[RMDB]
RNA sequence: GGGAACGACUCGAGUAGAGUCGAAAAGCGCCAAUGUCGACCCGGGGCGGGCUCGCGCGGUGGUGGGUUGCGCGCAGCGGGCGGCGUCGCUGGAGCGGCUGGUGUCGCUGCCCGCGGCUCGGGCGGCCGUACGUUAAUGUUUCGACAUUAACGUACGAAAAGAAACAACAACAACAAC
Reactivity to 2A3 in 0.01 (KOAc 150mM, MgCl2 10mM, bicine 150mM(pH8.5), 24C), signal-to-noise 5, nucleotides 027 to 126: g070c100g080c030c030a080a130u110g020u060c050g020a300c000c000c000g020g010g010g020c050g000g050g000c050u060c050g040c010g000c050g060g080u170g050g060u120g010g070g000u040u100g100c020g000c000g000c010a010g000c000g000g000g000c000g000g000c000g000u020c000g000c000u040g020g020a110g140c070g080g040c050u030g010g030u050g000u020c000g000c000u010g000c000c000c000g000c000g010g000c000u000c000g000g010g000c000g010g020c010
Reactivity to DMS in 0.01 (KOAc 150mM, MgCl2 10mM, bicine 150mM(pH8.5), 24C), signal-to-noise 4, nucleotides 027 to 126: g000c120g020c030c030a120a080u010g010u010c010g000a110c010c020c020g000g000g000g000c040g010g020g020c090u010c050g000c010g010c060g000g000u020g020g030u010g010g000g010u000u010g010c030g020c050g010c050a130g020c000g010g000g020c000g000g010c000g010u000c010g020c000u000g000g000a300g010c100g000g000c000u010g000g010u000g010u000c010g010c000u000g000c000c000c000g010c020g000g000c010u000c000g030g000g010c010g000g000c040
An RNA of 177 nucleotides, treated with 2A3 and DMS and read out base by base. Values are in units of 0.01, from 0 to 300, in steps of 10. The reactions ran in a buffer of 150 mM KOAc, 10 mM MgCl2 and 150 mM bicine (pH 8.5), at 24 C. The data come from the RNA Mapping Database (RMDB), library OK1LIB.